This 177-nucleotide RNA was probed chemically with 2A3 and DMS. 2A3 adducts were read by reverse transcription with SuperScript II with manganese. For 2A3, 2,414 sequencing reads were counted. It was measured as part of the RMDB library OK2TST.
[RMDB]
RNA sequence: GGGAACGACUCGAGUAGAGUCGAAAAUUACGCAUCUUGUUAUUCUAGUGUCUUUGGUUCUACGGUUAGCUAGGGACGGUAAAUUAAAUUAACGUAGUGUACUGGAAUAAGGAGGUAAUAUACGGUAACCCCUCGAUAUAUUCGUAUAUCGAGGGGUAAAAGAAACAACAACAACAAC
Reactivity to 2A3 in 0.01 (KOAc 150mM, MgCl2 10mM, bicine 150mM(pH8.5), 24C), signal-to-noise 3, nucleotides 027 to 126: u030u000a020c020g040c070a090u030c020u040u080g110u150u010a040u000u000c010u020a010g040u010g040u040c040u040u070u130g080g000u120u030c030u090a090c040g070g090u080u070a060g040c050u040a030g030g050g020a030c030g010g060u070a050a090a060u100u110a030a050a110u070u110a080a030c020g010u020a060g090u050g060u150a000c020u000g010g020a020a000u020a040a020g030g010a010g000g010u000a030a010u070a030u020a030c030g080g030u060a020
Reactivity to DMS in 0.01 (KOAc 150mM, MgCl2 10mM, bicine 150mM(pH8.5), 24C), signal-to-noise 3, nucleotides 027 to 126: u000u000a030c040g010c130a120u010c010u020u000g010u000u000a040u000u000c000u000a030g010u000g000u000c050u000u010u010g030g020u010u000c070u010a060c070g030g010u010u020a050g010c060u000a040g000g010g010a050c040g050g020u000a020a050a100u000u010a060a080a100u020u010a040a080c050g010u000a040g040u000g020u010a040c000u010g010g010a020a020u000a010a030g000g010a020g000g000u000a060a020u000a080u000a080c130g010g010u000a080